[RMDB]
RNA sequence: GGGAACGACUCGAGUAGAGUCGAAAACUUGCUAUGAACGCGUUCAUUUUUAAGUGACCGGACCCUAAAAUAUUCAGGUAGCAUGACGGAAGCUAUGAAUUAAUCCUGGUGGAGGGGUGUGUUCAGUCUCAAAUUAACAUUUCGAUGUUAAUUUGAGAAAAGAAACAACAACAACAAC
Reactivity to DMS in 0.01 (KOAc 150mM, MgCl2 10mM, bicine 150mM(pH8.5), 24C), signal-to-noise 4, nucleotides 027 to 126: c040u000u010g030c090u030a060u000g010a030a010c050g020c100g010u000u000c010a020u010u010u030u010u030a060a060g010u000g000a090c040c030g000g000a070c020c000c020u010a030a110a100a080u030a070u030u020c030a050g000g020u000a090g010c010a030u010g010a080c070g010g040a070a130g010c050u000a010u010g010a040a060u020u020a110a140u010c000c020u000g000g020u010g000g010a240g000g000g000g020u000g010u010g000u000u000c030a110g000u000
Reactivity to 2A3 in 0.01 (KOAc 150mM, MgCl2 10mM, bicine 150mM(pH8.5), 24C), signal-to-noise 9, nucleotides 027 to 126: c010u030u100g010c040u090a030u130g010a030a010c010g020c020g100u040u020c020a040u020u030u060u130u300a150a050g010u000g030a020c030c000g060g070a060c010c010c000u050a050a070a050a050u220a090u100u160c020a000g040g040u040a010g040c050a050u120g090a070c070g070g040a080a020g010c020u050a050u150g040a040a010u110u060a060a030u040c010c010u060g050g000u050g030g040a040g010g000g000g010u030g010u000g010u030u020c020a020g100u010